[RMDB]
RNA sequence: GGGAACGACUCGAGUAGAGUCGAAAAAUCGAUGACGCAGGGCAUUUUUGAAUGGCGUGUCGAUGCCCGAAAUGCCAGCCUGACGGAUCAUGGUCCUUGCCUGAGCGUUCUCACGCUGGAUGACGGAGUCAGGACCAGGUUUCGACCUGGUCCUGACAAAAGAAACAACAACAACAAC
Reactivity to 2A3 in 0.01 (KOAc 150mM, MgCl2 10mM, bicine 150mM(pH8.5), 24C), signal-to-noise 1, nucleotides 027 to 126: a000u000c010g020a010u110g110a010c000g050c050a000g030g120g130c030a080u030u010u010u220u300g260a150a060u110g040g020c020g020u030g000u000c040g010a030u030g000c000c020c000g020a070a050a010u240g000c000c000a000g000c030c030u020g000a000c040g090g000a220u050c000a050u170g020g000u000c170c000u090u160g050c020c000u030g000a030g040c010g000u150u000c060u040c000a000c030g000c000u020g050g000a040u030g040a090c070g090g020a020
Reactivity to DMS in 0.01 (KOAc 150mM, MgCl2 10mM, bicine 150mM(pH8.5), 24C), signal-to-noise 1, nucleotides 027 to 126: a000u000c010g020a000u010g000a030c010g000c040a120g020g020g060c060a010u020u000u010u000u040g040a080a050u000g000g010c000g010u000g000u000c010g010a000u000g000c000c010c010g010a020a030a040u000g010c020c010a060g020c000c050u010g000a050c150g010g000a120u000c000a060u050g020g010u010c120c100u000u010g000c020c040u000g000a100g010c080g000u000u010c120u000c080a060c300g040c010u010g010g000a050u010g010a180c150g000g000a280